[RMDB]
RNA sequence: GGGAACGACUCGAGUAGAGUCGAAAAGCGCGCGCUGGUGCGCACACCGUACGCGACCGCGUCGCGGGUCUGGCCCGUCUGCAGGAACCGCUCCCGGAUUCGCGUAAGCAGGAAGAUUUCAUAGUCCCCUUUUAAGCGCCUUCGGGCGCUUAAAAGGAAAAGAAACAACAACAACAAC
Reactivity to 2A3 in 0.01 (KOAc 150mM, MgCl2 10mM, bicine 150mM(pH8.5), 24C), signal-to-noise 1, nucleotides 027 to 126: g020c000g000c000g070c000g090c120u300g090g020u270g140c000g050c000a000c060a000c000c000g000u080a000c000g000c000g010a010c000c030g000c030g050u030c030g000c060g010g010g010u010c020u090g090g030c000c040c070g120u170c190u220g010c060a010g040g000a080a170c000c000g000c000u120c000c000c000g000g000a120u140u140c090g010c000g010u060a000a130g000c020a070g030g000a170a030g060a060u160u150u050c030a010u060a010g030u020c000c000